The record gives the reactivity of an RNA of 177 nucleotides to 2A3 and DMS. Reactivities are given for positions 27 through 126. The RNA was probed in 150 mM KOAc, 10 mM MgCl2 and 150 mM bicine (pH 8.5) at 24 C. It was measured as part of the RMDB library OK2TST.
RNA sequence: GGGAACGACUCGAGUAGAGUCGAAAAAAAUUCGACCAGGUGCUGGCCAUGAUCCGGGGCAGUCAGCUGUGCGGGCAGUCCAUCAUCGCCUACCUGCAGUCCAAGGGCUUCCCCGAGGUCGCGCUGCACACUUGCCUAUAUUCGUAUAGGCAAGUGUAAAAGAAACAACAACAACAAC
Reactivity to 2A3 in 0.01 (KOAc 150mM, MgCl2 10mM, bicine 150mM(pH8.5), 24C), signal-to-noise 3, nucleotides 027 to 126: a000a000a030u070u030c040g040a030c040c020a060g060g020u020g020c080u200g050g000c040c020a120u220g020a060u050c060c020g000g000g000g000c000a000g000u010c010a020g020c040u070g040u060g070c100g000g000g000c020a000g020u040c090c030a120u150c030a060u180c110g020c010c000u020a040c000c020u040g010c000a000g060u070c080c050a080a090g120g000g000c010u020u000c000c020c000c000g020a080g020g000u000c000g000c040g010c030u040g000c020
Reactivity to DMS in 0.01 (KOAc 150mM, MgCl2 10mM, bicine 150mM(pH8.5), 24C), signal-to-noise 5, nucleotides 027 to 126: a050a090a120u010u000c060g020a170c060c030a130g010g000u000g020c030u010g040g010c010c070a120u010g000a060u000c110c030g000g000g000g010c080a030g020u000c020a080g010c060u010g010u010g010c020g000g000g010c040a030g000u000c030c060a110u010c190a110u000c240g010c090c000u000a050c010c010u000g010c020a050g000u010c150c120a110a150g010g000g000c020u000u000c020c000c000c020g020a050g010g010u000c020g010c190g000c030u000g010c090